[RMDB]
RNA sequence: GGGAACGACUCGAGUAGAGUCGAAAAAAGUUGUAAGUGACCGUAGCCCUUGCAUUUUGCCGUGUUCUGAAGAGGAUUAUUUCAUAGUUUUUCAAGGGCUUUUAGUAUAUAUUGACAUUGGUUUCAUUUUCAGUAUUAUGCGUGUGAAACAAAACAAUAUACGAUAGAUAUUCGUAUCUAUCGUAUAAAAAGAAACAACAACAACAAC
Reactivity to 2A3 in 0.01 (KOAc 150mM, MgCl2 10mM, bicine 150mM(pH8.5), 24C), signal-to-noise 1, nucleotides 027 to 156: a010a010g090u070u030g020u040a150a150g050u040g110a030c050c050g030u020a030g020c000c000c000u020u000g000c020a050u020u020u070u140g060c000c010g030u020g040u070u040c040u090g070a140a090g030a030g130g030a040u140u120a040u020u230u010c040a040u020a070g030u080u000u000u080u080c000a000a000g000g000g000c080u020u010u020u030a020g020u000a000u000a020u030a040u020u100g010a000c000a030u030u090g070g020u060u080u110c000a030u060u130u040u100c050a010g010u050a120u300u050a060u240g120c110g020u120g020u040g050a030a020a000c020a030a080a040a010c040a090a000
Reactivity to DMS in 0.01 (KOAc 150mM, MgCl2 10mM, bicine 150mM(pH8.5), 24C), signal-to-noise 2, nucleotides 027 to 156: a070a100g000u000u010g010u010a090a100g030u000g020a110c030c040g010u000a090g020c010c020c010u010u000g010c090a120u000u000u000u000g020c010c040g010u010g010u000u000c040u020g000a100a120g020a180g020g020a110u010u010a060u000u010u010c030a060u000a120g000u000u000u010u010u000c050a050a040g000g020g000c030u000u000u010u000a090g020u000a060u000a080u000a100u000u000g000a050c090a130u000u010g020g010u000u010u010c010a080u000u000u000u000c020a080g040u000a060u000u000a050u000g020c020g020u000g010u000g000a090a060a080c040a040a050a040a080c040a050a200